Structure probing data (DMS and 2A3) for a 177-nucleotide construct. The 2A3 profile rests on 1,263 reads. It was measured as part of the RMDB library OK2TST. For DMS the reverse transcriptase was MarathonRT.

RNA sequence: GGGAACGACUCGAGUAGAGUCGAAAAUUGCUACAUCAGUUCUCUAGUACCUAAGGGUGUACUGCAUAAAUAUGAGGAGCUCAGUGCAUGCUGAGUGAAUGAGCAAAGUUUAGGAUGAGGGCAUGAGCCCCAAUCUCGUGUUCGCACGAGAUUGGGGAAAAGAAACAACAACAACAAC
Reactivity to DMS in 0.01 (KOAc 150mM, MgCl2 10mM, bicine 150mM(pH8.5), 24C), signal-to-noise 2, nucleotides 027 to 126: u000u010g010c030u010a100c040a040u000c030a190g000u020u000c040u010c010u000a070g020u000a030c080c010u020a150a130g040g030g030u010g020u010a050c040u010g000c150a070u020a110a070a100u010a060u000g000a080g000g010a230g010c030u000c010a010g020u000g000c250a080u000g020c010u000g000a020g000u000g000a060a080u000g010a110g010c080a070a100a100g000u000u000u000a060g030g000a110u000g000a110g010g010g030c050a100u010g000a120g030
Reactivity to 2A3 in 0.01 (KOAc 150mM, MgCl2 10mM, bicine 150mM(pH8.5), 24C), signal-to-noise 2, nucleotides 027 to 126: u010u030g030c020u090a070c020a050u070c010a020g080u100u000c000u000c000u060a060g020u070a040c010c060u080a090a110g160g060g020u100g130u050a020c010u010g100c050a120u140a250a260a030u280a150u210g040a030g040g030a010g010c010u000c020a010g030u030g120c080a050u250g040c020u000g020a000g000u070g080a020a010u090g000a010g010c020a030a020a130g050u070u170u110a110g040g060a070u030g040a020g020g020g040c050a030u090g030a040g070